[RMDB]
This 177-nucleotide RNA was probed chemically with DMS and 2A3. Conditions: 150 mM KOAc, 10 mM MgCl2 and 150 mM bicine (pH 8.5), 24 C. 2A3 adducts were read by reverse transcription with SuperScript II with manganese. For 2A3, 8,269 sequencing reads were counted. For DMS, 12,457 sequencing reads were counted. Reactivities are rounded to 0.1 and cut off at 0 and 3.
RNA sequence: GGGAACGACUCGAGUAGAGUCGAAAAAUCAUGCCAUUUCAAGAUUAUUUUCAGAAGAAAAAAGCAGCGUUCAUUAACAGAAACAAUAAAAGUAACGCAGAUGCUUCAGCGCUACGAGAUAUUAACGCAAAGUAGUAUGAUUCGUCAUACUACUUUGAAAAGAAACAACAACAACAAC
Reactivity to DMS in 0.01 (KOAc 150mM, MgCl2 10mM, bicine 150mM(pH8.5), 24C), signal-to-noise 9, nucleotides 027 to 126: a050u010c040a050u010g000c030c050a200u000u000u010c050a110a160g010a080u010u000a120u010u010u000u000c040a120g010a130a160g000a010a030a040a070a160a110g010c020a030g000c170g010u000u000c040a080u000u000a060a090c140a090g000a100a050a080c130a050a050u010a030a040a090a160g010u010a010a010c020g010c010a070g020a080u000g010c180u000u000c060a060g020c030g010c030u000a020c040g010a100g010a150u000a050u000u000a050a110c240g010
Reactivity to 2A3 in 0.01 (KOAc 150mM, MgCl2 10mM, bicine 150mM(pH8.5), 24C), signal-to-noise 7, nucleotides 027 to 126: a000u050c020a020u050g020c000c010a070u060u090u090c070a090a050g040a140u040u080a110u120u230u030u060c070a060g070a210a020g040a060a200a000a010a010a000g010c030a000g010c010g010u000u010c040a050u040u100a070a030c040a090g150a110a120a030c080a060a050u080a170a110a010a020g040u020a020a000c010g000c020a010g020a140u120g040c030u050u040c000a020g000c030g000c040u020a020c040g040a010g030a130u090a080u170u180a070a030c040g020